This 177-nucleotide RNA was probed chemically with DMS. It was measured as part of the RMDB library OK2TST. The DMS profile rests on 738 reads. The reactions ran in a buffer of 150 mM KOAc, 10 mM MgCl2 and 150 mM bicine (pH 8.5), at 24 C.
RNA sequence: GGGAACGACUCGAGUAGAGUCGAAAAUGCUGAAGAGGGAGCCUCAGAAAACCCAACCACCAUUGAAGAUUUUGAGGGCAAAGAGCUUGGGAGUCUGACAACACAUACCGGACUCGGCUUUGUGUUAAUACCCUGCUGGAUUCGUCCAGCAGGGUAUAAAAGAAACAACAACAACAAC
Reactivity to DMS in 0.01 (KOAc 150mM, MgCl2 10mM, bicine 150mM(pH8.5), 24C), signal-to-noise 1, nucleotides 027 to 126: u000g020c030u020g010a000a060g000a120g000g010g020a130g030c090c050u000c040a080g000a070a070a100a140c060c010c010a090a080c050c040a030c100c050a150u000u010g010a100a090g020a180u000u020u000u030g020a100g020g000g010c070a050a070a070g000a050g000c050u000u030g010g000g020a070g010u000c040u000g010a070c100a040a050c050a010c050a000u010a100c090c010g010g020a200c150u010c010g010g000c050u000u000u000g000u000g000u000u000a070